[RMDB]
RNA sequence: GGGAACGACUCGAGUAGAGUCGAAAAGAUAUGGAGAUCCUUCACAGAGCUACCGGUCGGAAACGACCGAGUAGCGACGAAGUGACUGGGAUCUCCUAAGUCAAAGUUAGAGCGUUCGCGCUCUAACCUGACAUCUGAUGUUCGCAUCAGAUGUCAGAAAAGAAACAACAACAACAAC
Reactivity to 2A3 in 0.01 (KOAc 150mM, MgCl2 10mM, bicine 150mM(pH8.5), 24C), signal-to-noise 2, nucleotides 027 to 126: g020a010u090a040u090g000g020a000g000a020u010c010c000u010u050c030a050c040a060g150a020g060c000u010a000c000c010g020g030u030c010g000g010a060a040a050c010g000a010c000c030g000a050g010u000a000g010c020g000a000c030g020a170a070g020u020g030a050c200u140g050g030g010a000u000c010u010c000c000u000a060a010g000u000c080a000a080a170g010u000u000a000g020a000g000c030g040u100u100c300g040c020g030c140u060c000u010a000a000c000
Reactivity to DMS in 0.01 (KOAc 150mM, MgCl2 10mM, bicine 150mM(pH8.5), 24C), signal-to-noise 3, nucleotides 027 to 126: g000a060u000a300u000g000g010a020g010a000u000c000c000u000u010c020a030c020a090g000a230g000c000u000a010c000c000g010g000u000c000g000g000a060a060a130c010g010a020c000c000g010a040g030u000a000g000c000g030a060c220g010a130a150g000u000g020a020c300u010g020g000g010a000u000c000u000c000c000u000a010a040g000u010c020a080a090a160g000u000u010a000g000a000g010c000g010u000u010c300g020c010g010c000u000c000u010a000a000c000
An RNA of 177 nucleotides, treated with 2A3 and DMS and read out base by base. For 2A3, 4,153 sequencing reads were counted. The RNA was probed in 150 mM KOAc, 10 mM MgCl2 and 150 mM bicine (pH 8.5) at 24 C. Source: RMDB library TTRDES, as collected in RNAgym. Reactivities are given for positions 27 through 126.